Conditions: 150 mM KOAc, 10 mM MgCl2 and 150 mM bicine (pH 8.5), 24 C. Structure probing data (2A3 and DMS) for a 177-nucleotide construct. For DMS, 2,856 sequencing reads were counted.
[RMDB]
RNA sequence: GGGAACGACUCGAGUAGAGUCGAAAAAAACCGAUUAACCAUACAUUUGGCCACCAACCCCGGAUCACUGCAAACGAAAAAGUAUGGGGAUGCUCCCCGGCAUUGAAUAUGUAUCACUAUUAACGUCUUCUUAUGAGGUGUUCGCACCUCAUAAGAAAAAAGAAACAACAACAACAAC
Reactivity to 2A3 in 0.01 (KOAc 150mM, MgCl2 10mM, bicine 150mM(pH8.5), 24C), signal-to-noise 2, nucleotides 027 to 126: a010a010a010c080c000g050a100u180u040a040a080c030c000a020u050a140c020a060u150u060u060g000g000c000c000a030c050c000a070a040c000c010c000c000g000g010a000u070c000a000c010u030g060c070a110a030a020c010g100a030a100a000a060a000g050u050a080u050g000g000g000g000a010u050g020c000u060c000c000c000c020g030g000c000a010u000u120g120a120a100u110a010u090g050u060a050u050c000a020c050u050a030u150u190a120a040c020g000u000c030
Reactivity to DMS in 0.01 (KOAc 150mM, MgCl2 10mM, bicine 150mM(pH8.5), 24C), signal-to-noise 2, nucleotides 027 to 126: a040a060a020c050c010g000a100u090u000a110a090c030c040a050u010a040c080a050u010u000u010g020g000c000c010a080c050c010a080a030c090c040c020c020g020g000a060u010c080a040c030u000g010c030a030a100a070c140g000a060a060a140a040a100g000u000a020u000g020g000g000g010a080u010g000c030u000c040c000c000c020g000g000c010a000u010u020g000a070a100u060a050u000g010u040a060u030c030a050c060u000a060u030u040a020a050c270g000u000c090